[RMDB]
RNA sequence: GGGAACGACUCGAGUAGAGUCGAAAAGAUAUGGACAGCAUGGUGGGAGAGCCACGUCGGAAACGACGUGAGCUCGAGGAUCACCUGCUGUCCUAAGUCAAAAUCUACCGGGUUCGCCCGGUAGAAACAGAUGAGUUGAGUUCGCUCAACUCAUCUGAAAAGAAACAACAACAACAAC
Reactivity to DMS in 0.01 (KOAc 150mM, MgCl2 10mM, bicine 150mM(pH8.5), 24C), signal-to-noise 1, nucleotides 027 to 126: g020a010u000a190u000g000g020a000c000a010g030c010a040u010g020g020u000g000g000g000a190g010a030g010c000c010a000c000g050u010c000g030g000a050a040a080c010g020a010c000g020u000g000a150g040c000u000c000g030a110g010g000a170u000c000a010c000c000u000g000c010u000g000u000c000c010u010a020a020g010u000c020a130a090a200a150u000c000u000a010c000c000g010g000g000u000u010c260g020c000c010c010g020g000u020a000g010a020a050a210
Reactivity to 2A3 in 0.01 (KOAc 150mM, MgCl2 10mM, bicine 150mM(pH8.5), 24C), signal-to-noise 1, nucleotides 027 to 126: g000a020u030a000u100g000g000a000c010a010g120c050a070u300g010g000u010g030g070g090a300g000a000g060c050c000a030c000g000u000c020g000g010a020a030a020c000g010a000c030g010u020g020a040g010c010u000c010g000a030g010g050a110u080c000a000c000c010u000g000c000u010g000u000c000c000u010a000a000g010u010c000a000a000a000a240u010c000u010a000c000c000g040g000g000u010u110c300g150c050c020c030g000g000u000a000g000a000a000a000